[RMDB]
RNA sequence: GGGAACGACUCGAGUAGAGUCGAAAAUUACAAAAGUCCGGAUGCAUAAGUACAAAGUACGCGAUAAACGGAAUAAUAAUAGAUUUAUCUAGUUUAUCUUUUUCUAUCGCUUUCAUAGUUAGAUACAAAGUCAGUUGAAAUUCGUUUCAACUGACUUAAAAGAAACAACAACAACAAC
Reactivity to DMS in 0.01 (KOAc 150mM, MgCl2 10mM, bicine 150mM(pH8.5), 24C), signal-to-noise 1, nucleotides 027 to 126: u020u000a080c050a110a050a060a130g010u000c040c050g020g000a090u010g000c010a080u010a050a160g040u000a040c080a060a060a160g050u000a040c060g010c150g000a020u000a030a010a040c120g000g000a110a080u010a090a040u000a110a170u000a110g000a100u010u020u000a050u020c010u020a080g010u000u000u020a040u000c010u000u000u000u000u000c070u010a040u000c080g020c030u010u010u030c120a040u020a090g010u000u020a050g020a080u000a110c180a030
Structure probing data (DMS) for a 177-nucleotide construct. For DMS, 770 sequencing reads were counted. Values cover nucleotides 27 to 126. The reactions ran in a buffer of 150 mM KOAc, 10 mM MgCl2 and 150 mM bicine (pH 8.5), at 24 C.